An RNA of 177 nucleotides, treated with 2A3 and DMS and read out base by base. The data come from the RNA Mapping Database (RMDB), library M2PK50. DMS adducts were read by reverse transcription with MarathonRT.
RNA sequence: GGGAACGACUCGAGUAGAGUCGAAAAACCUCUAAGUUCGCUUAGAGGUAAUGAACGCUGCAAAAAGCAGCGCGCUCAGCGGAGCAGGCAAAAGCAACGCAAGAACACCAUUCUUCGGAAUGGUGAACACCCCUUAUUUGUUCGCAAAUAAGGGGUGAAAAGAAACAACAACAACAAC
Reactivity to 2A3 in 0.01 (KOAc 150mM, MgCl2 10mM, bicine 150mM(pH8.5), 24C), signal-to-noise 3, nucleotides 027 to 126: a000c010c000u010c000u010a000a030g010u030u110c150g020c160u000u010a000g000a020g010g000u020a010a020u100g000a080a020c010g000c010u010g000c030a070a090a090a210a130g010c000a010g020c000g010c020g040c010u060c030a030g000c030g010g040a020g020c020a020g240g010c060a080a070a020a000g030c020a020a020c020g000c040a040a030g060a090a010c010a000c000c000a000u000u000c010u020u030c110g060g010a010a000u000g000g000u010g000a010a000
Reactivity to DMS in 0.01 (KOAc 150mM, MgCl2 10mM, bicine 150mM(pH8.5), 24C), signal-to-noise 3, nucleotides 027 to 126: a030c010c000u000c000u000a000a000g020u000u010c240g050c000u010u000a010g000a000g000g000u000a020a020u010g010a030a090c020g020c010u000g000c010a050a090a060a210a170g010c000a010g000c020g000c080g000c070u000c040a100g030c020g010g000a260g000c020a040g000g020c160a040a060a150a090g010c030a020a170c020g040c040a100a070g000a120a120c010a000c000c000a020u000u000c000u000u000c230g020g010a010a000u010g000g000u000g010a020a090
The reactions ran in a buffer of 150 mM KOAc, 10 mM MgCl2 and 150 mM bicine (pH 8.5), at 24 C. The DMS profile rests on 3,279 reads.